[RMDB]
RNA sequence: GGGAACGACUCGAGUAGAGUCGAAAAGGCCUUUUAUGCCCGUCUGCGCCAUGAACGUUACCUCAAUAAUCAGGCGCGCUUCGCCGGGGUGGCCAAUGCGGCGGCACUGUCACCGGGUCAGGAACUAUACGUAAAUGGAGUUCGCUCCAUUUACGUAAAAAGAAACAACAACAACAAC
Reactivity to 2A3 in 0.01 (KOAc 150mM, MgCl2 10mM, bicine 150mM(pH8.5), 24C), signal-to-noise 3, nucleotides 027 to 126: g020g000c010c010u040u140u040u130a200u210g120c000c000c000g040u020c080u090g010c000g000c010c040a300u090g040a070a020c120g070u120u140a160c070c080u140c080a100a130u140a110a080u140c010a030g010g000c010g000c010g010c020u180u160c070g000c010c010g000g010g000g060u070g020g000c030c010a000a040u140g000c020g020g000c000g000g030c050a040c080u080g040u120c020a030c070c030g030g000g000u030c010a020g000g030a020a010c010u030a040
Reactivity to DMS in 0.01 (KOAc 150mM, MgCl2 10mM, bicine 150mM(pH8.5), 24C), signal-to-noise 5, nucleotides 027 to 126: g010g010c020c040u010u010u020u020a130u020g010c000c000c030g010u010c060u000g020c040g020c010c020a120u000g020a040a090c260g010u010u000a090c150c090u010c130a060a070u010a110a180u000c070a040g000g010c030g020c060g010c130u010u010c120g000c090c020g020g010g000g010u000g000g020c030c040a050a100u000g020c020g010g000c040g000g020c060a060c060u000g000u000c060a070c110c020g010g010g000u000c050a060g010g010a100a110c070u010a190